[RMDB]
RNA sequence: GGGAACGACUCGAGUAGAGUCGAAAACAAGGGCCAGGCCCAGGGCUACUGCGUGCGGGAGCUGCAGGUGUGGCGGCCGGGCCAGGUGAGCCUGGCGGCUGUGGAGCGUGCCUGCUGUCGGCCUGCACAGGCAUAGAAGUUUCGACUUCUAUGCCUGAAAAGAAACAACAACAACAAC
Reactivity to 2A3 in 0.01 (KOAc 150mM, MgCl2 10mM, bicine 150mM(pH8.5), 24C), signal-to-noise 3, nucleotides 027 to 126: c020a060a120g080g020g010c020c040a040g040g050c020c020c010a020g060g020g050c020u150a150c080u160g120c030g070u030g000c000g000g010g020a010g030c010u010g000c000a010g020g000u040g030u050g110g020c010g020g000c030c020g040g060g010c000c000a000g000g050u110g080a060g110c000c010u000g000g000c000g020g000c030u020g030u130g100g130a150g140c010g030u060g010c010c010u010g000c010u020g090u140c030g080g160c010c000u000g000c000a010
Reactivity to DMS in 0.01 (KOAc 150mM, MgCl2 10mM, bicine 150mM(pH8.5), 24C), signal-to-noise 4, nucleotides 027 to 126: c180a120a100g000g010g020c010c020a050g010g010c010c010c010a190g000g000g000c030u000a110c170u010g010c150g020u000g000c010g010g000g010a300g020c010u000g000c010a020g000g030u000g020u010g020g010c020g010g000c000c010g010g000g010c010c010a040g010g010u000g010a130g010c010c000u000g000g020c020g000g000c010u000g000u010g010g000a150g010c060g010u000g000c010c000u000g000c010u000g000u010c050g020g010c010c000u000g020c030a090